About this RNA:
The data come from the RNA Mapping Database (RMDB), library TTRDES. This 177-nucleotide RNA was probed chemically with 2A3 and DMS. The RNA was probed in 150 mM KOAc, 10 mM MgCl2 and 150 mM bicine (pH 8.5) at 24 C.
[RMDB]
RNA sequence: GGGAACGACUCGAGUAGAGUCGAAAAGAUAUGGAGUGCCGAGCUUUUGACGAGCAAUGGUCGGAAACGACCAUUCGCUCGAUAAGCUCGGGUCACUCCUAAGUCAAAACUACACUUCGGUGUAGAAGUGACCUUUUAAGUUCGCUUAAAAGGUCACAAAAGAAACAACAACAACAAC
Reactivity to 2A3 in 0.01 (KOAc 150mM, MgCl2 10mM, bicine 150mM(pH8.5), 24C), signal-to-noise 3, nucleotides 027 to 126: g030a020u060a030u170g000g020a000g000u010g020c010c000g000a010g010c020u180u240u260u300g270a210c080g000a010g020c000a000a000u000g000g030u030c010g010g010a080a110a010c010g010a000c010c000a000u000u020c010g000c000u000c000g010a000u010a000a000g000c000u000c010g000g030g000u020c000a000c000u000c000c000u010a090a000g000u010c000a000a010a130a190c000u030a000c010a000c000u090u130c300g160g010u020g010u010a020g010a090a050
Reactivity to DMS in 0.01 (KOAc 150mM, MgCl2 10mM, bicine 150mM(pH8.5), 24C), signal-to-noise 4, nucleotides 027 to 126: g000a080u000a300u010g000g000a030g020u000g000c010c000g000a010g020c000u000u000u000u010g030a270c190g000a010g010c000a030a000u000g010g010u000c000g000g000a080a100a190c010g010a030c000c000a000u000u000c220g000c000u000c000g010a050u000a000a020g000c000u000c000g000g000g010u030c010a010c000u000c000c000u000a010a070g000u000c040a100a080a120a220c010u000a010c010a000c000u000u030c280g020g010u000g010u000a020g000a090a110